[RMDB]
RNA sequence: GGGAACGACUCGAGUAGAGUCGAAAAGAUAUGGACCUGAACUACGAAGACGUCGAAGAACAGCUUCGGAAACGAAGCUGGGAGACGUCUCGCAGGUCCUAAGUCAAAACCUAAGUUCGCUUAGGAAGAAUUACAUCUUGUUCGCAAGAUGUAAUUCAAAAGAAACAACAACAACAAC
Reactivity to DMS in 0.01 (KOAc 150mM, MgCl2 10mM, bicine 150mM(pH8.5), 24C), signal-to-noise 6, nucleotides 027 to 126: g010a040u010a300u000g010g010a010c000c000u000g000a100a070c120u010a300c030g010a060a040g000a010c000g030u000c000g010a100a110g000a120a150c010a000g000c000u000u000c000g000g000a070a070a150c010g010a000a000g010c000u000g000g000g000a090g010a010c000g010u000c000u000c000g000c000a010g000g000u000c010c010u000a020a070g010u000c040a080a080a100a160c000c000u000a010a010g010u000u010c200g020c010u000u000a010g000g000a100a120
Reactivity to 2A3 in 0.01 (KOAc 150mM, MgCl2 10mM, bicine 150mM(pH8.5), 24C), signal-to-noise 7, nucleotides 027 to 126: g030a010u070a050u150g010g010a010c020c000u000g020a100a110c100u120a050c300g140a220a050g000a010c010g000u010c000g140a300a070g020a090a020c010a000g000c000u000u000c000g020g030a060a060a020c010g000a000a000g000c000u000g000g000g010a010g000a000c010g000u000c000u000c000g000c000a000g010g000u000c000c000u010a050a000g020u010c020a020a040a060a160c000c000u000a010a010g010u030u150c300g020c180u010u010a010g030g030a020a060
Chemical mapping of a 177-nucleotide RNA with DMS and 2A3. Source: RMDB library TTRDEL, as collected in RNAgym. Reactivities are given for positions 27 through 126.